[RMDB]
RNA sequence: GGGAACGACUCGAGUAGAGUCGAAAAGAUAUGGAGCGAGCCGAUAAGGUGGACAUCGGAAACGAUGUCACACCUUUUGACGGCUCCUCCUAAGUCAAACUAUUCUUCUCUUCGGAGAAGAAUAGAAGCUGAAUUUUAUCUUCGGAUAAAAUUCAGCAAAAGAAACAACAACAACAAC
Reactivity to DMS in 0.01 (KOAc 150mM, MgCl2 10mM, bicine 150mM(pH8.5), 24C), signal-to-noise 1, nucleotides 027 to 126: g000a010u010a240u000g000g000a000g010c110g000a000g010c010c010g000a070u010a000a020g000g030u010g000g000a000c000a010u000c000g020g000a070a030a120c000g020a050u010g000u000c000a020c010a000c000c000u010u000u020u000g020a220c080g010g010c010u010c000c010u000c000c000u000a010a030g000u010c030a140a130a200c000u000a010u000u010c000u000u000c000u010c010u010u030c200g010g010a020g020a000a000g000a020a020u010a010g000a040a080
The record gives the reactivity of an RNA of 177 nucleotides to DMS. The RNA was probed in 150 mM KOAc, 10 mM MgCl2 and 150 mM bicine (pH 8.5) at 24 C.